[RMDB]
RNA sequence: GGGAACGACUCGAGUAGAGUCGAAAAGAUAUGGACUCCUACAGGGAGCGAAGUAAUCGGAAACGAUUACUCGCAUCGAUCUGUAGGGAGUCCUAAGUCAAAAGUGCGGAUCUUCGGAUCCGCACAAUCGUCUAAGAUACUUCGGUAUCUUAGACGAAAAAGAAACAACAACAACAAC
Reactivity to 2A3 in 0.01 (KOAc 150mM, MgCl2 10mM, bicine 150mM(pH8.5), 24C), signal-to-noise 2, nucleotides 027 to 126: g020a000u010a020u080g020g010a000c010u000c000c000u010a000c000a010g060g090g020a250g000c000g010a150a040g020u010a000a010u010c000g000g040a020a010a010c000g000a010u000u010a000c000u010c010g000c010a110u300c130g200a230u050c020u020g010u030a090g090g030g010a020g000u000c000c010u000a000a000g030u010c020a000a050a120a170g020u020g000c040g030g010a010u020c030u060u100c300g160g020a010u040c000c010g050c010a000c000a010a010
Reactivity to DMS in 0.01 (KOAc 150mM, MgCl2 10mM, bicine 150mM(pH8.5), 24C), signal-to-noise 3, nucleotides 027 to 126: g010a020u000a290u010g000g010a030c040u000c000c000u000a010c000a010g000g000g010a090g020c010g010a050a060g010u000a010a000u000c010g000g000a060a090a160c000g000a020u000u000a000c000u000c010g030c010a300u000c230g010a070u010c000u000g020u000a020g030g010g030a030g030u000c010c010u000a000a090g020u000c030a070a060a150a130g000u000g010c000g000g000a010u000c010u000u020c290g040g000a020u000c000c000g030c020a000c010a010a060